[RMDB]
Notes
The data come from the RNA Mapping Database (RMDB), library OK2TRN. The record gives the reactivity of an RNA of 177 nucleotides to DMS and 2A3. As a SHAPE reagent, 2A3 marks flexible, mostly unpaired nucleotides at the ribose 2'-OH.

RNA sequence: GGGAACGACUCGAGUAGAGUCGAAAAAGCGUCAUAAUUUGCCUAGAGUAGAUCCACCUCCUAGGUUUGGUUGGAAUGUCACUCAAAGACCUCGAAUUGAGGGUACUGGGCCUGGUCGUAUGAGACCGAGAUAGGGACGGUUCGCCGUCCCUAUCUCAAAAGAAACAACAACAACAAC
Reactivity to DMS in 0.01 (KOAc 150mM, MgCl2 10mM, bicine 150mM(pH8.5), 24C), signal-to-noise 1, nucleotides 027 to 126: a070g000c040g010u000c040a050u000a030a090u000u000u000g010c000c030u000a090g000a040g020u000a070g010a100u010c050c040a060c110c010u000c100c010u010a070g020g000u000u020u000g000g000u010u000g020g010a120a040u000g000u010c040a090c030u000c070a150a150a110g000a120c010c010u000c010g000a170a190u000u030g000a000g000g040g000u000a020c080u000g010g000g010c020c100u020g010g000u000c010g000u000a060u000g000a100g000a080c030c050
Reactivity to 2A3 in 0.01 (KOAc 150mM, MgCl2 10mM, bicine 150mM(pH8.5), 24C), signal-to-noise 1, nucleotides 027 to 126: a020g060c020g070u020c110a150u010a300a140u020u050u190g030c000c000u020a030g000a030g060u070a020g020a030u050c010c000a050c040c000u020c020c060u150a140g000g000u030u000u060g090g000u020u040g010g050a130a070u030g030u020c000a000c080u030c050a070a090a040g100a120c010c000u010c000g090a260a180u090u280g030a050g010g040g000u020a030c040u080g040g020g040c040c010u050g030g000u010c020g000u130a170u190g120a100g000a010c020c000
Notes
The reactions ran in a buffer of 150 mM KOAc, 10 mM MgCl2 and 150 mM bicine (pH 8.5), at 24 C.